[RMDB]
RNA sequence: GGGAACGACUCGAGUAGAGUCGAAAAAAGUUGCACCAGGUACGGAUACCAGACGUUGCCAAACAGGGUGACAUGAGGAUCACGCAUGUACUGUCCCUUGGCAGCCGUACCUGGUGCUGGUGAAAAACCAAUACAAUGCAUUCGUGCAUUGUAUUGGAAAAGAAACAACAACAACAAC
Reactivity to 2A3 in 0.01 (KOAc 150mM, MgCl2 10mM, bicine 150mM(pH8.5), 24C), signal-to-noise 8, nucleotides 027 to 126: a000a020g260u150u050g000c000a000c000c000a000g010g000u000a000c010g000g040a080u080a160c030c040a050g090a130c100g100u110u050g000c000c000a050a070a070c100a080g010g020g020u030g020a000c000a010u020g020a030g120g070a150u230c080a040c160g040c000a010u020g010u050a130c090u130g110u120c010c010c000u010u010g000g000c000a000g010c000c010g000u000a000c000c000u000g000g000u000g000c000u000g000g000u100g040a060a020a000a020a020
Reactivity to DMS in 0.01 (KOAc 150mM, MgCl2 10mM, bicine 150mM(pH8.5), 24C), signal-to-noise 8, nucleotides 027 to 126: a070a070g010u000u000g000c000a000c010c000a010g000g000u000a020c010g000g000a130u010a110c110c070a100g010a110c210g000u000u000g010c040c040a030a070a110c180a090g010g000g020u000g000a020c000a040u000g010a060g000g010a160u000c240a090c090g010c020a020u000g010u000a060c140u010g000u000c010c010c030u000u000g000g010c020a060g000c000c000g000u000a010c010c000u010g000g000u000g000c000u000g000g000u000g010a050a050a060a070a110
Notes
Conditions: 150 mM KOAc, 10 mM MgCl2 and 150 mM bicine (pH 8.5), 24 C. Chemical mapping of a 177-nucleotide RNA with 2A3 and DMS. It was measured as part of the RMDB library M2PK90. 2A3 adducts were read by reverse transcription with SuperScript II with manganese. For DMS, 12,298 sequencing reads were counted. For DMS the reverse transcriptase was MarathonRT.